[RMDB]
RNA sequence: GGGAACGACUCGAGUAGAGUCGAAAAUGUAAUGGUGUUAUUUCCUUUAGCAAUUAUAAAUCCGAGCCUGAGCAAAGAUUUCAAAAGCUCAGGUAGGAACCCCUAUCAAUUGUAGAGGUAGUAAGGCAGAUAAGGAAUAAUUCGUUAUUCCUUAUCUAAAAGAAACAACAACAACAAC
Reactivity to DMS in 0.01 (KOAc 150mM, MgCl2 10mM, bicine 150mM(pH8.5), 24C), signal-to-noise 5, nucleotides 027 to 126: u010g010u010a110a100u010g020g020u000g000u000u000a040u010u000u000c010c010u000u000u010a120g030c020a030a030u000u000a070u000a050a090a190u010c010c010g000a180g010c010c010u000g010a010g010c000a090a140a190g000a190u010u010u010c110a070a120a210a220g010c000u000c000a000g010g000u000a060g000g000a040a110c060c070c060c050u000a070u000c170a020a030u000u000g010u000a040g000a020g000g000u000a060g030u000a010a030g010g010c100
Reactivity to 2A3 in 0.01 (KOAc 150mM, MgCl2 10mM, bicine 150mM(pH8.5), 24C), signal-to-noise 3, nucleotides 027 to 126: u170g030u130a080a080u150g080g040u080g040u140u080a060u020u080u040c020c000u040u030u040a070g000c000a000a010u040u070a080u100a180a080a050u000c000c000g010a080g180c000c000u000g000a000g030c020a070a160a130g080a170u120u300u290c120a220a210a060a010g000c010u020c000a000g000g010u000a000g000g000a000a020c000c020c000c010u050a050u220c130a040a020u010u020g000u030a020g010a020g050g020u030a030g020u000a000a050g080g050c040
About this RNA
The record gives the reactivity of an RNA of 177 nucleotides to DMS and 2A3. DMS adducts were read by reverse transcription with MarathonRT. DMS (dimethyl sulfate) methylates the pairing face of unpaired adenines and cytosines. The data come from the RNA Mapping Database (RMDB), library OK2TST. The RNA was probed in 150 mM KOAc, 10 mM MgCl2 and 150 mM bicine (pH 8.5) at 24 C. 2A3 adducts were read by reverse transcription with SuperScript II with manganese.